[RMDB]
RNA sequence: GGGAACGACUCGAGUAGAGUCGAAAAGAUAUGGAGAUGACAGUAGCAACAGCUGGACGGGUCGGAAACGACCUACCAGACAUGCUAGUCAUCUCCUAAGUCAAACGUAUCACUUCGGUGAUACGAAGUGAAGUAAGAAGUUCGCUUCUUACUUCACAAAAGAAACAACAACAACAAC
Reactivity to DMS in 0.01 (KOAc 150mM, MgCl2 10mM, bicine 150mM(pH8.5), 24C), signal-to-noise 8, nucleotides 027 to 126: g000a020u000a080u010g000g000a020g010a020u000g000a010c020a210g020u000a010g020c010a140a130c220a140g010c000u000g000g000a200c250g010g000g010u000c000g020g000a010a020a070c000g010a010c010c000u000a020c000c000a000g000a020c090a200u010g010c000u000a100g000u010c010a010u000c000u000c000c000u000a000a050g000u000c010a130a110a260c020g010u010a010u000c000a000c000u000u010c240g020g010u000g000a010u000a000c000g010a040a090
Reactivity to 2A3 in 0.01 (KOAc 150mM, MgCl2 10mM, bicine 150mM(pH8.5), 24C), signal-to-noise 9, nucleotides 027 to 126: g010a000u020a010u060g000g000a000g000a000u010g010a020c050a130g300u130a000g030c090a090a300c120a270g050c010u030g040g110a300c150g090g000g000u000c000g000g000a010a010a000c000g000a000c010c010u000a010c000c010a000g040a050c030a120u300g000c000u010a000g000u000c000a000u000c000u000c000c000u000a000a000g000u000c010a040a030a090c020g000u010a000u000c000a010c020u060u090c300g160g000u000g000a000u000a000c000g010a150a010